[RMDB]
RNA sequence: GGGAACGACUCGAGUAGAGUCGAAAACAGUAUAGUGCCACUUGUGUGAGAAUACUUUUAGUACAAGCGAGUACACGCUGUAUACUGCCACUUGUGUGAGAAUACUUUUAGUACAAGCGAGUACACGUAUGGGCAGAACUUUCGAGUUCUGCCCAUAAAAAGAAACAACAACAACAAC
Reactivity to 2A3 in 0.01 (KOAc 150mM, MgCl2 10mM, bicine 150mM(pH8.5), 24C), signal-to-noise 2, nucleotides 027 to 126: c020a010g100u110a100u150a000g010u070g020c070c000a000c010u060u030g020u000g020u060g150a110g020a040a010u010a230c000u000u070u030u130a010g000u030a010c030a070a000g000c000g020a030g030u040a000c170a050c140g100c000u020g000u030a030u010a080c000u160g190c080c000a000c020u070u020g000u020g000u000g140a000g080a010a080u030a010c030u100u000u110u210a090g000u070a080c000a020a060g010c020g040a020g010u000a040c010a000c000g000
Reactivity to DMS in 0.01 (KOAc 150mM, MgCl2 10mM, bicine 150mM(pH8.5), 24C), signal-to-noise 2, nucleotides 027 to 126: c000a040g010u030a040u000a020g040u000g050c030c000a010c060u000u000g000u010g060u030g020a090g000a180a080u000a090c030u000u010u000u030a100g000u000a000c000a080a110g000c010g000a300g000u000a110c010a050c130g030c030u000g030u000a020u000a020c030u000g000c010c010a090c110u060u050g000u010g000u060g040a050g030a130a030u000a020c000u000u040u000u030a110g000u000a040c000a040a080g000c090g000a300g040u020a000c060a010c190g000

An RNA of 177 nucleotides, treated with 2A3 and DMS and read out base by base. The DMS profile rests on 1,495 reads. Source: RMDB library OK1LIB, as collected in RNAgym. DMS (dimethyl sulfate) methylates the pairing face of unpaired adenines and cytosines. The reactions ran in a buffer of 150 mM KOAc, 10 mM MgCl2 and 150 mM bicine (pH 8.5), at 24 C.